Structure probing data (2A3) for a 207-nucleotide construct. For 2A3, 607 sequencing reads were counted. It was measured as part of the RMDB library OK3TST.
[RMDB]
RNA sequence: GGGAACGACUCGAGUAGAGUCGAAAAUCUAUGCCACCCAAGUAAUAACGGUCUUGAAUCUGAUUACUUCUGUCCACUAUUUGUCUCCAUUAUCUUCGUGUAGAGUGUAAACCACAGUCACCCUAGAUUAUUGCAAUAGUGGUCUAACUCAAGGUCAGCAGGAUAGGAUGUUCGCAUCCUAUCCUGCAAAAGAAACAACAACAACAAC
Reactivity to 2A3 in 0.01 (KOAc 150mM, MgCl2 10mM, bicine 150mM(pH8.5), 24C), signal-to-noise 2, nucleotides 027 to 156: u030c020u080a210u120g200c120c000a050c050c000c010a130a080g010u000a020a190u000a220a020c050g000g040u010c000u010u000g060a120a060u040c130u050g070a170u140u070a120c050u050u090c140u080g010u100c060c000a000c030u040a060u040u180u160g060u050c030u110c030c060a050u020u070a010u060c060u080u030c090g110u030g020u210a060g030a020g010u030g070u100a060a170a000c060c000a010c030a030g130u070c010a040c040c060c000u020a010g010a020u020u000a010u000u150g000c000a030a000u000a040g000u000g020g000u000c000u030a040a040c000u020c030a000a000g130g000u150c050a010